[RMDB]
RNA sequence: GGGAACGACUCGAGUAGAGUCGAAAAAUAAACACACACAACAUAAUGGAAAAACGACUAUCUCUUCGACUGCUUCUGUUAUCGCAUUUCGUGCGAGGAUAAAGGUCGUUCGGAGUGAAAGCGUUCAUUUAAAACGCCGUUUCGACGGCGUUUUAAAAAAAGAAACAACAACAACAAC
Reactivity to DMS in 0.01 (KOAc 150mM, MgCl2 10mM, bicine 150mM(pH8.5), 24C), signal-to-noise 2, nucleotides 027 to 126: a030u080a020a080a160c120a080c010a060c050a070c130a090a090c120a120u040a140a060u020g000g060a130a060a070a000a030c020g000a130c000u000a050u000c020u010c000u000u000c000g010a020c000u020g010c000u000u070c030u000g040u000u060a060u000c000g030c000a010u000u030u010c190g010u040g000c000g000a000g000g020a020u000a030a030a020g000g010u000c030g030u120u010c000g000g000a030g020u000g020a020a050a000g010c010g010u010u000c040a100
Reactivity to 2A3 in 0.01 (KOAc 150mM, MgCl2 10mM, bicine 150mM(pH8.5), 24C), signal-to-noise 3, nucleotides 027 to 126: a000u140a000a130a000c000a000c010a000c020a000c030a140a040c030a100u300a260a170u120g090g020a130a010a000a000a000c000g260a130c020u040a090u140c000u000c000u020u000c000g000a000c000u010g000c000u000u030c030u040g010u040u080a000u010c010g030c060a040u000u300u180c120g060u050g000c000g000a020g000g000a010u050a000a070a000g030g020u020c030g070u140u000c010g010g010a000g000u010g000a040a000a000g020c020g000u020u090c020a080
An RNA of 177 nucleotides, treated with DMS and 2A3 and read out base by base. High 2A3 reactivity points to a flexible backbone, as in loops and unpaired stretches. Values cover nucleotides 27 to 126. The reactions ran in a buffer of 150 mM KOAc, 10 mM MgCl2 and 150 mM bicine (pH 8.5), at 24 C. DMS adducts were read by reverse transcription with MarathonRT. The DMS profile rests on 2,093 reads.